[RMDB]
RNA sequence: GGGAACGACUCGAGUAGAGUCGAAAAAACACGCCGAUCACGCUCUCGAACAUCAUCAGCAUCAUGUCCGACGAGGGCAUAAACUUCAGCGAUAUCAUCAUCCAGGGUAAGAAGGUGUUUCAGAUUCUCCUCAACGAGAACGGCGUCUCCGUUCUCACCCUUACCGUUUCUUCGGAAACGGUAAGGGAAAAGAAACAACAACAACAAC
Reactivity to 2A3 in 0.01 (KOAc 150mM, MgCl2 10mM, bicine 150mM(pH8.5), 24C), signal-to-noise 2, nucleotides 027 to 156: a000a000c050a010c020g030c010c010g010a050u080c020a030c080g000c000u000c010u020c020g060a060a050c030a060u120c010a020u020c010a050g080c000a060u050c010a010u120g050u000c030c020g040a120c100g010a170g000g020g000c040a000u080a020a090a010c080u130u110c090a020g000c000g080a030u030a020u140c080a030u030c010a010u000c010c030a040g000g040g000u070a110a050g020a040a040g070g000u020g040u020u040u070c060a070g000a100u040u000c030u030c040c030u110c090a070a060c110g000a000g000a000a000c000g020g010c070g120u020c030u000c020c000g010u000u010c010u020c000a040
Reactivity to DMS in 0.01 (KOAc 150mM, MgCl2 10mM, bicine 150mM(pH8.5), 24C), signal-to-noise 1, nucleotides 027 to 156: a060a000c040a030c060g000c000c030g060a110u000c010a180c030g000c030u010c010u030c010g000a010a060c010a020u000c020a220u000c070a190g010c080a190u000c060a130u000g040u010c040c000g040a200c100g000a110g020g000g030c020a130u000a020a050a060c040u030u000c050a040g010c030g040a280u030a060u000c090a040u000c060a070u010c040c010a050g000g020g000u000a050a050g000a110a070g020g010u000g000u000u000u000c100a110g010a220u000u000c010u000c040c010u000c110a080a080c010g000a020g010a000a010c000g020g000c040g010u010c070u000c010c000g000u000u000c000u000c020a200
The data come from the RNA Mapping Database (RMDB), library OK3TST. Structure probing data (2A3 and DMS) for a 207-nucleotide construct. For DMS the reverse transcriptase was MarathonRT. Reactivities are rounded to 0.1 and cut off at 0 and 3. The reactions ran in a buffer of 150 mM KOAc, 10 mM MgCl2 and 150 mM bicine (pH 8.5), at 24 C.